Chemical mapping of a 207-nucleotide RNA with 2A3 and DMS. The RNA was probed in 150 mM KOAc, 10 mM MgCl2 and 150 mM bicine (pH 8.5) at 24 C. The data come from the RNA Mapping Database (RMDB), library RNAMAK. 2A3 adducts were read by reverse transcription with SuperScript II with manganese. In probing experiments dimethyl sulfate is read out at A N1 and C N3, which are open when not base-paired.
RNA sequence: GGGAACGACUCGAGUAGAGUCGAAAAAACGCGUUCGCGCGUUACCAGCUCCUAAGUCUUAUACCUUUCGUUUGACGCAAUUUGUCAGUCGGAAACGACUUGGAUUUAAUUGCCGAGAAAGGUUAAGAUAUGGAUAGUCGAGCCUUUCGAGGCUCAAGAACAUCACAAAAUUCGUUUUGUGAUGUUCAAAAGAAACAACAACAACAAC
Reactivity to 2A3 in 0.01 (KOAc 150mM, MgCl2 10mM, bicine 150mM(pH8.5), 24C), signal-to-noise 6, nucleotides 027 to 156: a000a000c030g010c020g000u080u070c270g000c000g010c000g130u000u020a070c020c000a050g070c070u040c020c010u080a210a080g020u000c010u010u040a060u080a130c000c010u030u000u020c050g150u140u140u230g090a080c050g000c000a010a000u010u010u030g010u030c010a010g000u000c000g000g050a090a080a070c010g010a000c010u040u130g040g000a000u000u030u040a010a010u000u000g000c010c010g030a040g000a080a010a000g000g000u000u000a000a000g000a000u010a020u040g010g000a040u100a110g180u180c110g000a000g000c000c000u090u210u190c260g090a010g000g000c000u000c000a000a000
Reactivity to DMS in 0.01 (KOAc 150mM, MgCl2 10mM, bicine 150mM(pH8.5), 24C), signal-to-noise 3, nucleotides 027 to 156: a050a010c020g020c000g020u000u010c300g060c010g040c000g010u000u000a050c030c000a220g000c080u000c010c010u030a020a250g030u000c000u000u000a030u010a030c010c010u000u020u000c000g040u000u010u010g010a140c220g000c000a020a020u000u000u000g010u000c000a070g000u000c010g010g020a170a100a240c020g020a010c000u000u010g040g020a050u000u000u000a010a020u000u010g000c000c000g000a220g000a010a010a020g010g010u000u000a010a030g020a040u000a300u000g020g010a080u000a090g010u000c050g010a050g020c000c000u000u000u000c250g010a110g020g020c010u000c010a010a170